RNA sequence: GGGAACGACUCGAGUAGAGUCGAAAAAGCGGAUGAACCAUUGGUGGUGACAAUAAGGGAGCUGUUUGUCAGUGAGUCAGAGUUCAAAUUGAGCUGCAGUGAGACUCAGACAGAGAGAGAAAUGGCCUCAUAGUUGCUAAUUCGUUAGCAACUAUGAAAAAGAAACAACAACAACAAC
Reactivity to DMS in 0.01 (KOAc 150mM, MgCl2 10mM, bicine 150mM(pH8.5), 24C), signal-to-noise 9, nucleotides 027 to 126: a080g010c040g010g010a080u000g010a120a080c060c040a100u000u000g010g020u000g010g020u000g010a090c080a050a080u010a090a100g010g010g010a100g010c030u000g000u000u000u000g010u000c030a090g010u000g010a060g010u000c020a120g010a040g010u010u000c030a050a080a160u000u010g000a040g010c030u000g010c080a100g010u010g010a170g000a030c010u000c010a070g000a030c040a030g000a090g000a080g010a090g000a040a060a070u000g010g010c060c090
Reactivity to 2A3 in 0.01 (KOAc 150mM, MgCl2 10mM, bicine 150mM(pH8.5), 24C), signal-to-noise 7, nucleotides 027 to 126: a000g060c050g020g020a090u070g040a050a030c040c020a080u030u100g040g000u030g010g050u040g040a040c040a050a100u120a120a070g030g030g000a070g040c020u020g060u110u070u020g070u040c070a090g070u010g100a010g010u010c020a010g010a000g080u010u050c040a070a230a300u140u120g000a020g000c020u100g020c050a040g050u030g150a120g010a020c000u000c020a000g000a010c000a010g050a010g000a000g000a000g020a030a080a070u070g020g020c000c010

The record gives the reactivity of an RNA of 177 nucleotides to DMS and 2A3. The RNA was probed in 150 mM KOAc, 10 mM MgCl2 and 150 mM bicine (pH 8.5) at 24 C. The 2A3 profile rests on 9,337 reads. Source: RMDB library OK2TST, as collected in RNAgym.